[RMDB]
RNA sequence: GGGAACGACUCGAGUAGAGUCGAAAAUUCUAGGGAAGAGAACCAAAGGUCGGGACCCAUCUUGAGUUGGAGUCAAAGUUUCGUACUUGUCUGGCCUUUGGACCCCCUCUUCCUUGGUCUUCACUCCAGACCCCUGUAAAUUCGUUUACAGGGGUCUAAAAGAAACAACAACAACAAC
Reactivity to DMS in 0.01 (KOAc 150mM, MgCl2 10mM, bicine 150mM(pH8.5), 24C), signal-to-noise 2, nucleotides 027 to 126: u010u010c020u020a010g030g010g000a000a000g000a030g000a040a090c000c000a020a000a010g030g010u000c000g010g000g000a010c010c000c020a000u000c070u050u030g020a150g010u000u010g010g000a100g000u020c040a060a000a010g010u000u020u060c150g000u020a010c000u010u000g030u100c030u000g000g000c000c000u010u000u000g000g000a150c050c150c300c140c000u010c000u000u000c000c000u010u000g000g000u000c010u000u000c100a110c090u010c020c030
Reactivity to 2A3 in 0.01 (KOAc 150mM, MgCl2 10mM, bicine 150mM(pH8.5), 24C), signal-to-noise 3, nucleotides 027 to 126: u030u010c010u010a000g000g000g000a000a000g010a000g010a030a010c000c000a010a000a000g010g010u010c010g000g010g020a020c010c000c000a020u020c040u180u300g200a300g100u050u000g040g060a140g030u030c030a060a010a030g010u010u060u230c290g060u220a020c000u010u050g040u090c010u000g000g000c000c000u000u000u000g010g000a010c000c000c000c030c000u010c000u000u000c030c000u000u000g000g000u010c010u040u070c030a070c110u010c030c000